RNA sequence: GGGAACGACUCGAGUAGAGUCGAAAAUUUUUCCGUUCUUCAGGAUCAUCGGGAAGUGCUUUGAUUUUGUAAUCUCCCAUUCUGUUAUUUUCGUCUACCUCACCUUUUGAAUCUCCGACAGAUUUGGAGCAACUUGGCGAUUCGUCGCCAAGUUGCUAAAAGAAACAACAACAACAAC
Reactivity to 2A3 in 0.01 (KOAc 150mM, MgCl2 10mM, bicine 150mM(pH8.5), 24C), signal-to-noise 1, nucleotides 027 to 126: u100u090u000u000u040c000c000g000u120u050c000u000u000c000a060g110g080a080u040c150a060u040c000g000g000g000a120a110g000u010g060c000u000u060u130g080a060u150u090u000u170g100u080a050a030u080c000u090c010c010c020a020u120u010c000u000g220u200u030a120u000u080u050u120c000g100u000c000u010a050c000c000u020c000a090c010c030u000u060u020u000g060a100a000u060c060u000c000c090g000a080c000a140g000a180u180u300u090g150g040